[RMDB]
RNA sequence: GGGAACGACUCGAGUAGAGUCGAAAAAUACCUUUAGUGGUAUCAACUGGCCAAAAGAUGAUGUUGAGUUUAGUGUUCUUGAGAUGAGAUGAGGCAAUAAAUGAAGAGGAAGGACAGUGGUAAAGAAACGACUGAUAGGUUUCGACCUAUCAGUCGUAAAAGAAACAACAACAACAAC
Reactivity to DMS in 0.01 (KOAc 150mM, MgCl2 10mM, bicine 150mM(pH8.5), 24C), signal-to-noise 1, nucleotides 027 to 126: a080u000a050c010c000u010u010u010a090g000u010g040g010u010a040u000c140a140a090c040u010g010g010c000c040a090a130a050a090g010a080u000g010a070u000g050u000u000g010a090g020u000u010u020a090g020u020g000u000u010c020u010u010g000a180g010a110u010g010a090g020a040u000g000a070g040g000c060a070a040u000a020a040a060u000g010a120a120g000a080g010g010a060a010g000g030a030c080a020g020u000g020g000u000a070a060a140g010a120a050